[RMDB]
RNA sequence: GGGAACGACUCGAGUAGAGUCGAAAAGAAGUGGCAGGGACAUGCCCCACAAGCUCGUUCUAGCAACAUAUGUUUGGCUAGUUCGAGCGAUUAGUCUUGAGGAGCGUCCUCUCGCCUCUUGACGAGAACUAUCCUCCUGCUUCGGCAGGAGGAUAGUAAAAGAAACAACAACAACAAC
Reactivity to 2A3 in 0.01 (KOAc 150mM, MgCl2 10mM, bicine 150mM(pH8.5), 24C), signal-to-noise 4, nucleotides 027 to 126: g040a040a010g020u050g050g010c070a020g040g020g020a080c020a040u250g060c020c000c000c000a030c030a060a010g000c000u000c000g000u000u000c000u000a000g000c010a010a030c040a100u250a080u300g130u120u080u090g120g000c000u000a000g000u000u000c000g000a000g000c000g000a000u010u050a020g020u040c030u050u080g020a120g000g020a140g020c000g010u010c010c000u070c000u030c030g050c000c000u000c000u010u020g050a040c060g020a020g030a110
Reactivity to DMS in 0.01 (KOAc 150mM, MgCl2 10mM, bicine 150mM(pH8.5), 24C), signal-to-noise 3, nucleotides 027 to 126: g020a080a010g010u030g000g020c050a110g000g010g020a060c060a150u010g020c040c000c030c030a120c070a160a050g010c030u000c000g000u000u000c000u000a020g010c000a050a020c080a200u120a150u060g000u040u000u020g020g020c000u000a000g020u000u000c020g000a000g020c000g020a020u020u050a110g030u010c120u040u010g000a160g000g000a130g030c000g010u000c010c010u030c090u020c200g000c000c000u010c040u000u010g000a130c060g000a210g010a150
Annotation:
Chemical mapping of a 177-nucleotide RNA with 2A3 and DMS. Values are in units of 0.01, from 0 to 300, in steps of 10. High 2A3 reactivity points to a flexible backbone, as in loops and unpaired stretches. For DMS, 3,227 sequencing reads were counted. The reactions ran in a buffer of 150 mM KOAc, 10 mM MgCl2 and 150 mM bicine (pH 8.5), at 24 C. The 2A3 profile rests on 3,123 reads.